[RMDB]
RNA sequence: GGGAACGACUCGAGUAGAGUCGAAAAACGGUAAUGGUGCCGUCCUCGUGGCGGACACGAAUCCAUUGGCCGUAGCCGGAUGCUGGGCCCGAAUCGAUUACUAGACCGUCCAUCACGGAAUAAAUCGCGUGGUAUCACAAUUCGUUGUGAUACCACGAAAAGAAACAACAACAACAAC
Reactivity to 2A3 in 0.01 (KOAc 150mM, MgCl2 10mM, bicine 150mM(pH8.5), 24C), signal-to-noise 4, nucleotides 027 to 126: a000c020g000g000u050a040a020u050g030g030u060g040c020c010g010u000c020c000u190c110g140u290g010g030c010g000g060a050c090a020c120g070a010a020u040c020c000a020u010u020g140g000c000c020g010u010a010g030c040c030g080g030a110u220g050c060u140g040g030g000c020c000c000g070a020a100u090c020g010a030u030u060a100c090u050a050g070a070c010c000g030u040c040c020a160u130c050a010c030g010g070a070a030u130a070a070a020u040c050g010
Reactivity to DMS in 0.01 (KOAc 150mM, MgCl2 10mM, bicine 150mM(pH8.5), 24C), signal-to-noise 4, nucleotides 027 to 126: a040c020g020g000u000a060a000u000g010g010u000g000c040c030g010u010c010c030u020c270g020u010g010g010c030g000g000a070c100a060c210g000a070a150u000c010c020a020u000u000g010g020c020c020g010u000a030g010c030c050g030g010a110u000g000c060u010g020g000g010c020c010c060g000a110a090u020c090g000a040u000u010a080c140u000a100g010a210c030c030g000u000c090c140a110u010c120a070c020g000g000a070a090u010a020a070a050u020c080g010
Chemical mapping of a 177-nucleotide RNA with 2A3 and DMS. Source: RMDB library OK2TRN, as collected in RNAgym. DMS adducts were read by reverse transcription with MarathonRT. For DMS, 2,905 sequencing reads were counted. The reactions ran in a buffer of 150 mM KOAc, 10 mM MgCl2 and 150 mM bicine (pH 8.5), at 24 C.